[RMDB]
RNA sequence: GGGAACGACUCGAGUAGAGUCGAAAAGAUUAAAUAUGUCAUUAUCACAGGCCAAUGGGAGGUGUUUCACGAAAACCGGGAAAAGCGAAUUUCUGCCUUAUAAACACCGGAAUACAGACCAUUAGCGACCAGCAUCUCAAUUCGUUGAGAUGCUGGUAAAAGAAACAACAACAACAAC
Reactivity to 2A3 in 0.01 (KOAc 150mM, MgCl2 10mM, bicine 150mM(pH8.5), 24C), signal-to-noise 2, nucleotides 027 to 126: g020a000u040u270a080a050a080u300a140u220g060u050c090a030u070u130a080u070c030a010c020a210g000g000c000c010a020a000u000g030g000g060a100g000g030u040g040u030u060u090c090a080c120g090a020a020a010a020c020c000g000g010g030a000a120a080a000g070c060g100a080a080u000u100u090c010u030g060c000c000u080u060a100u060a130a030a020c020a000c020c000g000g060a020a020u160a010c000a050g050a040c000c000a000u050u070a070g000c000g010
Reactivity to DMS in 0.01 (KOAc 150mM, MgCl2 10mM, bicine 150mM(pH8.5), 24C), signal-to-noise 2, nucleotides 027 to 126: g010a090u000u090a040a050a080u000a060u080g000u020c050a050u020u000a130u030c090a090c180a090g000g000c000c020a020a030u010g000g000g010a060g060g000u000g000u000u000u000c100a170c120g030a090a000a050a260c050c020g000g000g000a160a000a110a050g030c110g010a120a100u010u010u000c150u010g010c120c020u000u000a100u010a090a090a070c100a020c000c000g000g000a050a110u010a030c130a070g000a070c010c000a020u000u000a110g030c020g040

This 177-nucleotide RNA was probed chemically with 2A3 and DMS. 2A3 is a SHAPE reagent: it acylates the 2'-hydroxyl of flexible nucleotides of all four kinds. 2A3 adducts were read by reverse transcription with SuperScript II with manganese. The RNA was probed in 150 mM KOAc, 10 mM MgCl2 and 150 mM bicine (pH 8.5) at 24 C. For DMS the reverse transcriptase was MarathonRT. Values cover nucleotides 27 to 126. It was measured as part of the RMDB library RFM100. For 2A3, 1,384 sequencing reads were counted.